Chemical mapping of a 177-nucleotide RNA with 2A3.
For 2A3 the reverse transcriptase was SuperScript II with manganese.
High 2A3 reactivity points to a flexible backbone, as in loops and unpaired stretches.
The data come from the RNA Mapping Database (RMDB), library RFM100.
RNA sequence: GGGAACGACUCGAGUAGAGUCGAAAACUUAGCAAUAAGGUUACAGAUCAUGAUGAUUGGAUUCUAUGAAUACGUGAUUAUAUACCGUAUUUGUUUAGGGACUGCAACCCCUUUACGAAUCCUGUCUGCCCGACAAAAACUUCGGUUUUUGUCGGGCAAAAGAAACAACAACAACAAC
Reactivity to 2A3 in 0.01 (KOAc 150mM, MgCl2 10mM, bicine 150mM(pH8.5), 24C), signal-to-noise 1, nucleotides 027 to 126: c000u020u020a020g030c090a000a140u090a080a030g180g000u160u090a020c030a200g160a050u120c130a120u130g020a100u140g000a000u090u010g020g000a000u000u000c000u000a030u070g000a000a000u000a000c000g040u000g090a010u210u290a090u090a050u010a110c000c000g000u000a000u000u010u030g000u000u000u000a010g110g000g000a070c040u010g030c170a140a250c010c000c000c000u000u070u060a060c000g000a000a000u000c000c040u000g000u000c000u000
The reactions ran in a buffer of 150 mM KOAc, 10 mM MgCl2 and 150 mM bicine (pH 8.5), at 24 C.
Reactivities are given for positions 27 through 126.